This 207-nucleotide RNA was probed chemically with DMS and 2A3.

RNA sequence: GGGAACGACUCGAGUAGAGUCGAAAAGUCUCGUCAAUGCAGAAAAUUAUUGACAAACAGCAGGAGCGCAUUAAAGAGAUGGAAGAAGACUUGUCUUCUAUUGAUUCCAUGGUUCUCGACAAGCUUGACAAGUUCAACGAAAACGUCAAGGCUCGGAGAGCUGACGUUUGUUCGCAAACGUCAGCUCAAAAGAAACAACAACAACAAC
Reactivity to DMS in 0.01 (KOAc 150mM, MgCl2 10mM, bicine 150mM(pH8.5), 24C), signal-to-noise 2, nucleotides 027 to 156: g000u000c000u000c020g010u000c040a050a060u010g000c090a190g000a070a200a100a100u000u020a100u020u000g000a140c070a170a060a090c040a180g040c080a050g020g020a080g010c080g070c040a060u000u000a020a050a060g000a090g000a040u010g000g030a040a050g020a040a100g020a110c080u000u000g000u010c000u000u000c030u000a100u000u000g000a200u000u000c040c040a080u000g010g000u000u010c030u000c000g010a130c060a040a030g000c010u010u000g030a030c040a050a130g000u000u030c030a070a150c060g030a060a060a090a090c100g000u010c010a070a090g050g030c020u000c040g010g000a260
Reactivity to 2A3 in 0.01 (KOAc 150mM, MgCl2 10mM, bicine 150mM(pH8.5), 24C), signal-to-noise 3, nucleotides 027 to 156: g020u010c010u020c030g040u000c010a040a040u030g050c060a060g270a140a140a030a040u210u100a070u070u040g010a030c020a020a150a020c040a030g070c030a030g000g070a030g010c060g000c030a040u060u080a120a030a000g050a020g000a010u010g020g020a010a020g010a010a010g090a090c060u190u130g090u040c000u030u010c000u030a060u070u130g100a070u110u000c030c030a010u040g090g000u030u020c030u030c030g050a060c020a110a010g020c000u020u010g010a010c030a100a130g030u050u100c070a130a060c100g100a140a040a010a020c040g000u010c010a000a030g060g000c010u020c040g070g000a050
It was measured as part of the RMDB library OK3TST.
Conditions: 150 mM KOAc, 10 mM MgCl2 and 150 mM bicine (pH 8.5), 24 C.
Values cover nucleotides 27 to 156.